[RMDB]
RNA sequence: GGGAACGACUCGAGUAGAGUCGAAAAACACACGUACGUGUGUACUCGAGUGUGAUCGUGUUCGAACGAACUCGAGUGAACGUGAACUCUCUCUCGAACUCGAGUGUUCUCGAUCGUUCACUCACACUCGAACACGUGAACGUGUGAGAACUCGAUCGUCUACUAAUAGGUUCGCCUAUUAGUAGACAAAAGAAACAACAACAACAAC
Reactivity to 2A3 in 0.01 (KOAc 150mM, MgCl2 10mM, bicine 150mM(pH8.5), 24C), signal-to-noise 7, nucleotides 027 to 156: a000c010a000c000a000c000g030u110a010c010g010u030g000u020g060u130a130c050u010c010g000a000g000u000g000u010g010a070u150c160g000u000g010u010u010c010g000a020a020c010g000a020a010c000u000c000g000a000g000u010g020a030a000c020g010u020g040a060a040c030u060c010u010c020u000c000u000c260g040a120a000c000u000c000g000a020g010u040g140u170u060c080u000c020g000a040u000c010g000u000u000c000a000c010u010c000a000c000a000c000u000c000g000a010a010c000a000c000g010u030g070a090a000c000g000u000g000u010g000a030g030a050a060c040u070c060g100a160u160c100
Reactivity to DMS in 0.01 (KOAc 150mM, MgCl2 10mM, bicine 150mM(pH8.5), 24C), signal-to-noise 2, nucleotides 027 to 156: a080c010a020c000a040c020g000u000a040c050g040u000g010u040g000u010a030c130u000c000g030a030g040u000g040u000g000a070u010c120g050u010g010u010u010c020g020a030a220c050g040a130a090c010u010c030g010a030g020u000g000a060a020c040g020u000g010a090a180c090u010c170u010c090u000c020u010c010g000a120a070c010u010c000g020a050g020u000g000u000u010c100u000c000g000a100u000c070g000u010u000c010a080c020u010c020a000c020a030c000u010c000g010a050a030c020a030c020g000u010g000a130a040c050g000u000g000u000g000a110g030a070a170c060u000c010g020a220u000c070